[RMDB]
RNA sequence: GGGAACGACUCGAGUAGAGUCGAAAAGUAAGGAUGGGCUCUCACACCUCCUGGAGCCAGCACCCUCCAGGAUAUUUCCAUGAGGAAAGGAUGGUGGCAGCCCUAGUGACCCAUGGGACACGGCUGGUUAGACGGGGUCAUUCGUGACCCCGUCUAAAAAAGAAACAACAACAACAAC
Reactivity to 2A3 in 0.01 (KOAc 150mM, MgCl2 10mM, bicine 150mM(pH8.5), 24C), signal-to-noise 1, nucleotides 027 to 126: g170u190a030a040g080g100a090u060g000g000g000c040u020c000u030c010a040c000a010c060c000u060c000c000u010g000g000a000g030c000c070a060g000c000a130c120c000c010u000c000c000a050g010g000a020u040a150u180u010u000c000c030a020u300g070a100g050g010a050a000a000g060g040a110u180g090g060u000g000g000c040a040g020c000c000c000u010a040g010u000g040a060c000c000c000a000u090g060g130g000a030c020a000c120g000g060c000u020g050g000
Reactivity to DMS in 0.01 (KOAc 150mM, MgCl2 10mM, bicine 150mM(pH8.5), 24C), signal-to-noise 1, nucleotides 027 to 126: g010u000a020a040g020g010a130u020g000g000g020c020u030c020u010c020a020c010a010c000c030u000c020c000u000g000g030a030g000c100c040a140g030c060a050c100c140c000u000c000c000a000g000g030a100u050a010u000u000u000c000c000a140u040g000a070g000g040a060a010a120g000g000a120u000g010g000u000g000g000c300a050g000c010c000c000u000a010g000u020g010a110c000c000c000a220u080g010g000g000a060c030a010c020g040g030c090u000g000g010
Description
Conditions: 150 mM KOAc, 10 mM MgCl2 and 150 mM bicine (pH 8.5), 24 C. The record gives the reactivity of an RNA of 177 nucleotides to 2A3 and DMS. Reactivities are given for positions 27 through 126. DMS (dimethyl sulfate) methylates the pairing face of unpaired adenines and cytosines. The DMS profile rests on 1,444 reads.